[RMDB]
RNA sequence: GGGAACGACUCGAGUAGAGUCGAAAAGCAAGUGGCCCCAUCUCAUUUUUGCACCUAAGGUGGUCUGUAUUCUGAAUUGAGAGCCAUAGUCAAAAAUAGUUCCAUGGACCCUAAGAUUAGGUAUAUCAUAUCCACUACCUUUCGAGGUAGUGGAUAUAAAAGAAACAACAACAACAAC
Reactivity to 2A3 in 0.01 (KOAc 150mM, MgCl2 10mM, bicine 150mM(pH8.5), 24C), signal-to-noise 2, nucleotides 027 to 126: g030c040a040a120g060u060g070g050c010c040c070c020a050u040c050u020c090a170u130u110u080u170u150g060c020a020c010c020u020a040a060g170g000u040g040g020u100c010u000g090u030a140u100u020c040u060g100a230a060u090u020g020a050g000a010g030c060c020a050u070a020g020u100c050a000a010a000a020a000u040a060g010u050u000c010c040a020u040g050g020a040c000c000c000u030a070a050g030a240u050u080a010g060g010u030a120u060a000u100c040
Reactivity to DMS in 0.01 (KOAc 150mM, MgCl2 10mM, bicine 150mM(pH8.5), 24C), signal-to-noise 3, nucleotides 027 to 126: g030c040a090a100g020u000g020g010c050c010c020c050a120u000c050u020c100a070u000u000u000u000u000g030c120a060c040c010u000a080a070g000g040u000g020g000u000c040u010g020u000a050u000u010c080u010g010a070a120u000u000g000a070g020a070g010c030c020a040u010a060g020u020c080a020a040a040a070a050u020a070g000u000u010c030c050a090u010g020g010a060c060c000c050u000a060a100g010a150u010u000a030g010g010u010a100u000a100u020c100